[RMDB]
Source: RMDB library OK3TST, as collected in RNAgym. Chemical mapping of a 207-nucleotide RNA with DMS and 2A3. The RNA was probed in 150 mM KOAc, 10 mM MgCl2 and 150 mM bicine (pH 8.5) at 24 C. For DMS, 1,739 sequencing reads were counted.
RNA sequence: GGGAACGACUCGAGUAGAGUCGAAAAGUACACGAGAGUACUCGAUCGUGAUCUCGUUCGAACGAGAGAGUUCUCUCGAGAACACACACUCUCGAACACUCACACGUGAGAACACGUGAGUGUGUGUACUCGUGAGAGAGUGAUCGAACUCGAACGACACACUCCAUUGGUUCGCCAAUGGAGUGUGAAAAGAAACAACAACAACAAC
Reactivity to DMS in 0.01 (KOAc 150mM, MgCl2 10mM, bicine 150mM(pH8.5), 24C), signal-to-noise 2, nucleotides 027 to 156: g150u000a110c050a050c070g000a190g010a180g030u010a010c030u010c010g000a080u000c050g020u010g030a070u010c060u000c040g010u010u000c050g070a070a000c000g030a300g030a100g020a300g010u000u000c000u010c000u000c000g000a000g000a030a090c000a020c030a010c030a010c000u000c010u000c060g000a090a260c300a210c020u000c010a160c020a230c220g010u030g000a150g010a120a300c150a300c070g000u000g000a020g070u000g020u060g000u000g010u000a000c050u000c020g000u000g000a070g000a010g000a090g000u010g010a250u000c020g000a090a110c010u000c010g060a030a120c020g010a260
Reactivity to 2A3 in 0.01 (KOAc 150mM, MgCl2 10mM, bicine 150mM(pH8.5), 24C), signal-to-noise 4, nucleotides 027 to 156: g180u150a040c070a020c110g040a040g020a030g150u060a030c010u020c010g020a020u010c020g020u040g050a120u040c010u010c020g010u020u070c040g030a150a130c040g000a020g000a000g000a030g070u040u000c000u000c010u000c000g010a000g000a010a000c010a000c000a000c000a000c000u030c000u040c010g080a240a030c000a010c050u000c010a020c010a020c160g080u040g030a020g040a120a010c030a010c050g010u010g000a010g000u000g000u000g000u000g000u030a080c000u010c020g030u160g010a010g000a000g000a000g030u050g020a050u010c010g010a040a040c000u000c010g000a040a000c000g030a010
Values cover nucleotides 27 to 156.